About this RNA
An RNA of 177 nucleotides, treated with 2A3 and DMS and read out base by base.

RNA sequence: GGGAACGACUCGAGUAGAGUCGAAAAGAUAUGGACUACCCCGUUUUAAUAUGCGGUCGGAAACGACCGGCAUAUAGGGUAGUCCUAAGUCAAAACUACAAUAUGGUCUUCGGACCAUAUUGUAGAACAUUUAUCCUAUGUUCGCAUAGGAUAAAUGAAAAGAAACAACAACAACAAC
Reactivity to 2A3 in 0.01 (KOAc 150mM, MgCl2 10mM, bicine 150mM(pH8.5), 24C), signal-to-noise 4, nucleotides 027 to 126: g020a010u070a040u130g000g000a010c010u010a000c010c020c020c000g020u090u190u080u280a120a040u030a010u030g000c000g030g000u000c010g000g040a070a050a040c010g010a000c010c010g010g020c000a000u020a010u060a020g000g000g010u000a000g000u000c000c000u000a030a000g030u000c020a010a010a110a160c000u010a010c000a010a000u000a000u010g000g010u010c010u050u120c300g100g000a000c000c000a000u000a000u000u010g000u000a000g000a000a000
Reactivity to DMS in 0.01 (KOAc 150mM, MgCl2 10mM, bicine 150mM(pH8.5), 24C), signal-to-noise 7, nucleotides 027 to 126: g010a040u000a300u000g000g000a010c000u000a010c000c000c000c210g010u010u000u010u010a180a060u000a000u000g000c000g000g000u000c000g010g000a080a110a200c000g010a000c000c000g030g030c000a000u000a000u000a070g000g000g000u000a010g000u000c000c000u000a010a090g010u000c030a060a080a110a190c010u000a000c000a000a010u000a000u000g000g010u000c000u000u010c220g040g000a020c000c000a000u000a000u000u000g010u000a000g000a090a140
Background
The data come from the RNA Mapping Database (RMDB), library TTRDEL.